[RMDB]
RNA sequence: GGGAACGACUCGAGUAGAGUCGAAAAAGUGAGAGACCAAGCUUGGGGAAUGCCCGUAAAAAGAGAAUUAGUAAAAUAACCCUUGAGCAAGGUGAGUUGAAGAAACCAACAUUUCCCAGGGUGAGCAGACUUUUAAUAGGUUCGCCUAUUAAAAGUCAAAAGAAACAACAACAACAAC
Reactivity to DMS in 0.01 (KOAc 150mM, MgCl2 10mM, bicine 150mM(pH8.5), 24C), signal-to-noise 3, nucleotides 027 to 126: a060g010u010g000a120g020a150g030a090c050c020a040a230g000c020u000u000g000g010g000g020a140a100u000g010c040c020c020g010u030a040a060a080a070a090g020a120g000a100a060u010u010a060g010u000a070a040a040a050u030a120a110c040c000c000u000u000g020a040g000c080a050a200g000g010u000g010a110g000u000u000g010a090a060g000a090a050a060c050c040a080a110c060a070u000u000u010c000c010c000a110g010g010g010u020g010a080g010c180a130
Reactivity to 2A3 in 0.01 (KOAc 150mM, MgCl2 10mM, bicine 150mM(pH8.5), 24C), signal-to-noise 1, nucleotides 027 to 126: a000g080u120g020a130g010a010g070a030c020c000a010a000g050c030u000u010g000g000g030g000a050a060u100g020c000c010c010g080u120a090a080a020a020a000g070a000g080a060a070u110u060a150g100u150a030a080a070a080u070a070a060c000c000c000u000u040g020a010g010c010a000a000g000g000u030g000a060g000u040u100g090a100a090g080a130a050a000c010c000a020a040c010a050u010u040u000c000c000c030a000g000g000g020u070g040a040g000c050a030